Chemical mapping of a 170-nucleotide RNA with 2A3 and DMS. DMS adducts were read by reverse transcription with MarathonRT. The RNA was probed in 150 mM KOAc, 10 mM MgCl2 and 150 mM bicine (pH 8.5) at 24 C.
[RMDB]
RNA sequence: GGGAACGACUCGAGUAGAGUCGAAAAGUUGAUGGAAAACCCAUUAGUGCCUACGCAUUUUUAAUGGCCAAGGAUGGAAUAACCAAACUGGCUGAUGUUGAAGCGGACGUCGCAGCACGUGCUGAUGAACCUCUGUAGUUCGCUACAGAGAAAAGAAACAACAACAACAAC
Reactivity to 2A3 in 0.01 (KOAc 150mM, MgCl2 10mM, bicine 150mM(pH8.5), 24C), signal-to-noise 9, nucleotides 027 to 129: g040u040u060g020a070u060g010g010a050a030a040a070c000c000c000a020u020u040a050g070u050g030c020c030u050a070c060g020c040a060u020u010u000u040u270a120a090u120g010g000c030c020a070a050g030g010a020u030g000g040a140a130u120a140a070c010c000a010a040a050c000u000g030g000c010u030g030a060u090g050u070u090g030a050a020g010c020g040g000a030c030g010u050c040g020c080a020g010c050a020c090g070u140g010c030u050g010a080u040g020a040a030c000
Reactivity to DMS in 0.01 (KOAc 150mM, MgCl2 10mM, bicine 150mM(pH8.5), 24C), signal-to-noise 9, nucleotides 027 to 129: g020u020u010g020a070u000g030g010a080a060a110a150c140c010c010a020u030u010a040g030u040g000c040c050u000a140c150g030c080a000u020u020u000u000u050a070a100u030g000g020c000c010a050a070g040g020a170u000g000g000a220a140u070a130a120c000c020a010a070a170c030u000g000g050c040u000g000a070u000g020u040u000g000a050a070g040c040g020g010a080c070g000u030c050g040c050a020g030c020a130c200g020u010g020c030u030g000a040u050g000a080a060c170